[RMDB]
Source information:
The record gives the reactivity of an RNA of 177 nucleotides to 2A3 and DMS. Source: RMDB library RFMREP, as collected in RNAgym. Reactivities are given for positions 27 through 126. 2A3 adducts were read by reverse transcription with SuperScript II with manganese. The DMS profile rests on 6,374 reads.
RNA sequence: GGGAACGACUCGAGUAGAGUCGAAAAGGUUGCUGAAGACGCCAUAUUCCGUCUCCCUUUACCGAUGUGCCCCUUCUUGGGGCCAGGCCGUCGGCUGAUGAGGUUAGGGACUAACCAUGGCAGCCAACCACUUUAAAUUCUUCGGAAUUUAAAGUGGAAAAGAAACAACAACAACAAC
Reactivity to 2A3 in 0.01 (KOAc 150mM, MgCl2 10mM, bicine 150mM(pH8.5), 24C), signal-to-noise 4, nucleotides 027 to 126: g010g010u030u050g010c020u070g080a070a010g030a030c020g040c060c050a150u090a160u270u080c040c020g020u010c020u000c000c010c000u010u060u090a040c020c000g030a040u090g080u210g040c010c000c000c000u060u170c070u160u200g000g000g000g040c010c000a000g010g010c000c020g240u160c130g010g000c020u040g030a130u110g090a040g020g030u010u050a010g010g010g020a030c010u030a020a030c030c010a040u080g020g000c000a000g020c010c000a020a020
Reactivity to DMS in 0.01 (KOAc 150mM, MgCl2 10mM, bicine 150mM(pH8.5), 24C), signal-to-noise 5, nucleotides 027 to 126: g020g010u000u010g010c010u000g010a110a070g000a060c040g030c130c090a090u010a140u010u010c140c030g000u000c050u000c010c000c010u000u000u000a040c010c020g010a110u000g010u010g010c000c000c000c010u000u010c230u010u000g020g010g020g010c020c040a030g000g010c040c040g020u010c110g020g030c020u000g010a140u010g000a150g010g010u000u000a030g000g010g010a120c100u000a070a070c100c070a110u000g010g000c000a030g010c010c010a140a240